An RNA of 177 nucleotides, treated with DMS and 2A3 and read out base by base.
It was measured as part of the RMDB library M2PK90.
Reactivities are given for positions 27 through 126.

RNA sequence: GGGAACGACUCGAGUAGAGUCGAAAAUGAAAGACUAGGAAACUCGAAUAAAUAAGUGGUAAUCCUAGCGAAUCCACGGCGAGGAAACUAGGACACUAACCAUGUGAUCCCGGACGCUUGAAAAAAAGUUACGAACUUAGUUCGCUAAGUUCGUAACAAAAGAAACAACAACAACAAC
Reactivity to DMS in 0.01 (KOAc 150mM, MgCl2 10mM, bicine 150mM(pH8.5), 24C), signal-to-noise 3, nucleotides 027 to 126: u000g010a080a140a180g040a170c020u000a050g000g010a050a180a150c040u000c010g010a100a110u020a100a140a140u010a080a100g020u000g000g000u000a100a140u000c020c000u000a030g010c070g000a190a120u000c000c020a050c080g000g010c030g030a080g010g020a070a160a090c010u010a010g020g010a080c050a020c080u000a080a060c160c230a040u000g010u000g000a150u000c000c000c050g010g000a080c110g000c080u000u020g020a000a010a100a070a040a050a090
Reactivity to 2A3 in 0.01 (KOAc 150mM, MgCl2 10mM, bicine 150mM(pH8.5), 24C), signal-to-noise 2, nucleotides 027 to 126: u110g020a050a010a010g060a070c020u020a040g050g020a040a140a040c020u010c030g040a050a080u160a230a150a010u140a210a060g030u050g060g000u040a060a020u010c000c000u000a040g020c020g010a020a030u020c030c000a040c060g040g000c080g020a030g010g050a020a100a020c030u030a020g020g020a020c010a010c050u060a080a020c010c010a050u110g040u020g040a110u000c000c020c000g010g030a030c030g080c070u180u170g150a080a040a020a000a000a010a010